[RMDB]
RNA sequence: GGGAACGACUCGAGUAGAGUCGAAAACCCAGUUCCGGGGCCGUUCACUGGAUCCGAAGCCUCUAGAAGGAUAAUAUAGGCACUUCAUACCCUACUCCGACUCAAUACGUCCCCGUCGUACAGAAUGCAAGGGCAUCCCUGUUCGCAGGGAUGCCAACUGUGUAACAUAGUUCGCUAUGUUACACAGAAAAGAAACAACAACAACAAC
Reactivity to 2A3 in 0.01 (KOAc 150mM, MgCl2 10mM, bicine 150mM(pH8.5), 24C), signal-to-noise 3, nucleotides 027 to 156: c000c000c000a020g040u130u050c040c000g000g010g000g000c020c020g000u070u040c070a090c120u100g050g040a060u000c020c050g020a050a020g070c030c010u010c030u070a120g030a170a010g110g030a100u090a190a110u170a060u080a110g050g010c070a030c120u160u130c020a070u180a190c000c000c000u050a080c040u010c030c030g080a060c020u020c080a090a020u040a120c020g030u000c000c010c020c020g040u050c010g020u040a090c010a060g160a160a070u110g060c080a040a070g040g000g000c000a000u020c010c000c000u010g000u060u070c160g010c100a000g000g010g040a000u000g000c000c000a000a000
Reactivity to DMS in 0.01 (KOAc 150mM, MgCl2 10mM, bicine 150mM(pH8.5), 24C), signal-to-noise 1, nucleotides 027 to 156: c030c000c010a180g020u000u010c060c020g000g080g060g070c000c020g000u010u030c070a100c070u020g040g010a030u000c070c020g010a120a180g000c040c080u000c030u030a130g000a160a110g010g000a120u000a020a200u020a110u000a140g000g000c060a070c060u010u000c070a220u010a090c000c000c040u000a110c050u000c010c010g000a060c010u000c020a070a080u010a020c000g020u010c000c020c000c010g020u000c050g020u000a130c030a180g040a100a190u010g000c060a110a160g010g020g040c010a010u000c010c010c000u000g030u010u010c240g120c000a070g010g050g010a010u000g000c000c000a000a000
Source: RMDB library M2RFPK, as collected in RNAgym. This 207-nucleotide RNA was probed chemically with 2A3 and DMS. DMS adducts were read by reverse transcription with MarathonRT. Reactivities are given for positions 27 through 156. The DMS profile rests on 1,953 reads. The reactions ran in a buffer of 150 mM KOAc, 10 mM MgCl2 and 150 mM bicine (pH 8.5), at 24 C. For 2A3, 1,222 sequencing reads were counted. Values are in units of 0.01, from 0 to 300, in steps of 10.